[RMDB]
RNA sequence: GGGAACGACUCGAGUAGAGUCGAAAAGAGGAGGUGGAGAUGCCAUGCCGACCCGAAGAGGAAAGAAGGACGCGAGACGCAAACCCGUGAGUGGAAAUUCGCUUUAUUCACUGGGGUCGACAACUCUCCUUGUUAAUUUGUUCGCAAAUUAACAAGGAAAAGAAACAACAACAACAAC
Reactivity to 2A3 in 0.01 (KOAc 150mM, MgCl2 10mM, bicine 150mM(pH8.5), 24C), signal-to-noise 2, nucleotides 027 to 126: g070a060g040g020a030g000g030u060g010g010a070g010a060u130g030c000c030a070u060g030c000c020g040a050c040c000c020g030a100a020g060a040g080g040a030a040a100g050a010a030g060g020a020c060g030c020g030a040g020a030c040g000c090a080a080a080c020c010c020g060u090g070a050g020u140g070g010a060a070a060u130u080c020g000c000u060u060u060a090u040u070c010a010c080u070g020g000g010g000u010c010g030a020c010a090a080c000u040c010u040
Reactivity to DMS in 0.01 (KOAc 150mM, MgCl2 10mM, bicine 150mM(pH8.5), 24C), signal-to-noise 2, nucleotides 027 to 126: g000a070g010g000a080g000g010u000g010g010a090g030a080u000g020c070c080a080u000g010c060c030g010a080c050c020c020g000a080a070g010a110g010g000a050a020a170g000a090a060g000g000a140c180g010c080g000a100g000a090c090g000c100a070a100a100c050c030c010g000u000g000a020g010u010g010g000a020a080a210u000u010c110g000c060u000u000u000a020u010u000c020a060c050u020g020g000g010g000u000c030g020a020c040a040a090c140u000c070u010